[RMDB]
RNA sequence: GGGAACGACUCGAGUAGAGUCGAAAAACAACGCGGCGGCGGCGACCACCACCUGCGCCGGCGACGAGAGGCCAACCACAAGCGGCGCCGAACCACGCGUCGUGAGGCUCUUCGGCGUCGACAUCGCAUCAUAGUGUUAGUUCGCUAACACUAUGAUAAAAGAAACAACAACAACAAC
Reactivity to DMS in 0.01 (KOAc 150mM, MgCl2 10mM, bicine 150mM(pH8.5), 24C), signal-to-noise 9, nucleotides 027 to 126: a070c090a080a110c090g020c040g010g000c030g000g020c030g000g010c030g000a080c090c040a100c070c050a070c060c040u010g010c040g010c040c010g010g000c010g010a050c040g000a070g000a110g020g000c030c020a070a140c090c070a080c170a100a160g010c010g010g010c000g020c010c020g010a050a090c140c080a060c170g010c090g010u000c050g010u000g010a090g000g010c100u000c070u000u000c010g000g000c010g010u000c000g010a050c100a060u010c120g010c120
Reactivity to 2A3 in 0.01 (KOAc 150mM, MgCl2 10mM, bicine 150mM(pH8.5), 24C), signal-to-noise 6, nucleotides 027 to 126: a010c040a020a030c030g010c020g060g000c010g040g000c010g000g010c010g050a040c020c020a040c010c030a050c010c030u090g020c020g000c020c000g050g030c010g000a040c020g020a010g010a020g100g050c020c020a040a040c040c040a100c040a170a040g060c000g010g000c000g000c010c020g020a050a030c120c010a050c070g040c030g070u100c020g010u040g030a160g030g000c020u010c010u100u030c010g010g000c000g010u010c000g020a020c010a070u130c060g020c060

The data come from the RNA Mapping Database (RMDB), library OK2TRN. The record gives the reactivity of an RNA of 177 nucleotides to DMS and 2A3. For 2A3, 24,089 sequencing reads were counted. For DMS, 16,745 sequencing reads were counted. The RNA was probed in 150 mM KOAc, 10 mM MgCl2 and 150 mM bicine (pH 8.5) at 24 C.